[RMDB]
RNA sequence: GGGAACGACUCGAGUAGAGUCGAAAACAAAGAGUCCGCACGUGGCCAGUCAGGGGAAAGCUCUGGACGUUCAAGGUCUUUCCUCUACCAGGUGAGCUCUCAUGAACAGUCUGAGUCCACACACGGAUCUCUCGAUGAGAUUCGUCUCAUCGAGAGAAAAAGAAACAACAACAACAAC
Reactivity to DMS in 0.01 (KOAc 150mM, MgCl2 10mM, bicine 150mM(pH8.5), 24C), signal-to-noise 2, nucleotides 027 to 126: c080a080a110a150g000a080g030u000c010c070g050c040a180c130g020u000g000g020c020c080a070g030u000c140a060g040g010g010g000a030a030a040g010c000u000c020u000g000g020a120c250g000u010u000c050a080a030g030g000u000c000u000u000u000c000c000u010c030u000a060c110c090a050g000g030u000g010a090g010c040u000c030u020c050a090u000g000a060a090c070a150g000u010c010u010g010a090g000u000c000c010a020c080a150c140a080c060g000g000a070
Reactivity to 2A3 in 0.01 (KOAc 150mM, MgCl2 10mM, bicine 150mM(pH8.5), 24C), signal-to-noise 1, nucleotides 027 to 126: c010a020a090a010g090a100g020u030c030c010g020c040a050c090g060u040g030g000c040c020a060g020u080c080a030g000g000g000g080a030a110a020g030c000u000c010u040g020g060a080c110g090u140u080c100a120a050g020g000u000c000u000u000u040c000c000u090c020u030a100c040c090a020g070g000u010g020a020g050c040u040c010u020c090a060u130g050a060a020c040a040g090u000c010u010g020a030g080u030c020c000a000c020a000c000a000c030g050g010a060
This 177-nucleotide RNA was probed chemically with DMS and 2A3. The 2A3 profile rests on 1,130 reads. The RNA was probed in 150 mM KOAc, 10 mM MgCl2 and 150 mM bicine (pH 8.5) at 24 C. In probing experiments dimethyl sulfate is read out at A N1 and C N3, which are open when not base-paired.